RNA sequence: GGGAACGACUCGAGUAGAGUCGAAAAGUGUCACUCUACAUCUGCUAGUGCUGUUCCGGGUUACUUGGUUCAGUGCGAAAUAAUAGGUAACUCGCCAAAGUCCAGCCUGUCCGUCGGCGUGGCGGAGGUUAAAUCCAAAUGACACGACUAAGUAUGUCCUUAAUGGUUAGUUCGCUAACCAUUAAGGAAAAGAAACAACAACAACAAC
Reactivity to 2A3 in 0.01 (KOAc 150mM, MgCl2 10mM, bicine 150mM(pH8.5), 24C), signal-to-noise 6, nucleotides 027 to 156: g100u090g050u030c010a020c030u040c040u070a030c040a290u060c060u120g050c080u110a020g010u020g070c050u050g000u030u000c020c020g000g000g000u080u040a040c020u020u060g020g000u050u070c040a040g020u020g080c030g090a060a040a030u250a050a050u050a050g040g000u030a030a020c010u000c050g020c010c000a040a070a010g010u000c010c020a010g000c020c010u090g050u040c030c040g050u050c040g030g050c050g010u030g000g000c010g010g010a020g000g000u020u050a030a060a040u080c060c030a020a050a030u100g010a020c010a000c040g040a010c030u030a080a060g130u120a150u220g050u050
Reactivity to DMS in 0.01 (KOAc 150mM, MgCl2 10mM, bicine 150mM(pH8.5), 24C), signal-to-noise 1, nucleotides 027 to 156: g010u000g020u000c050a100c030u010c040u000a070c040a120u000c090u050g030c040u020a200g010u010g030c020u000g000u000u000c010c030g000g040g020u000u000a050c050u000u010g020g020u000u000c040a170g020u010g000c010g020a130a110a030u010a120a160u010a040g020g020u000a040a030c010u000c010g040c060c010a020a080a080g010u000c030c060a020g000c000c010u000g050u010c000c040g040u000c050g010g030c110g000u010g010g000c030g000g000a100g010g000u000u000a070a090a140u000c060c110a060a070a130u000g010a060c020a050c010g020a060c030u000a050a160g010u000a080u000g000u010